[RMDB]
RNA sequence: GGGAACGACUCGAGUAGAGUCGAAAACAGUCCACAGAUUAUCUCGAUGAUCGUAUCGACGAUAUUCACCUUCUUGCUGGCGGGCCUUUCGAGGUCCGUUUUCUCAGGUCAUUGAGCUUUUUGUGCCCUCGAAUAUAUGGUUCGCCAUAUAUUCGAGAAAAGAAACAACAACAACAAC
Reactivity to DMS in 0.01 (KOAc 150mM, MgCl2 10mM, bicine 150mM(pH8.5), 24C), signal-to-noise 5, nucleotides 027 to 126: c120a130g010u010c120c020a050c070a070g010a050u010u000a040u000c010u000c010g000a020u000g010a060u010c130g020u010a060u010c100g010a060c140g010a030u000a050u010u010c090a090c060c040u000u000c090u010u000g010c110u000g000g010c000g000g010g000c000c000u000u000u010c170g020a020g020g010u000c000c000g000u000u000u010u010c040u000c060a090g010g010u000c050a030u000u000g010a040g000c200u000u000u000u000u000g010u000g000c110c060
Reactivity to 2A3 in 0.01 (KOAc 150mM, MgCl2 10mM, bicine 150mM(pH8.5), 24C), signal-to-noise 5, nucleotides 027 to 126: c010a020g130u060c040c010a030c020a020g050a040u040u050a030u100c010u000c000g010a020u020g020a060u070c050g060u150a090u160c080g110a040c060g010a040u020a090u150u100c030a050c020c020u080u100c040u070u090g050c050u020g030g000c010g020g000g000c000c000u070u080u090c210g100a000g000g000u000c000c000g000u010u010u030u000c010u010c010a030g020g020u010c010a020u020u040g020a010g020c020u080u060u010u030u050g040u040g040c010c020
The record gives the reactivity of an RNA of 177 nucleotides to DMS and 2A3. The DMS profile rests on 7,557 reads. Conditions: 150 mM KOAc, 10 mM MgCl2 and 150 mM bicine (pH 8.5), 24 C.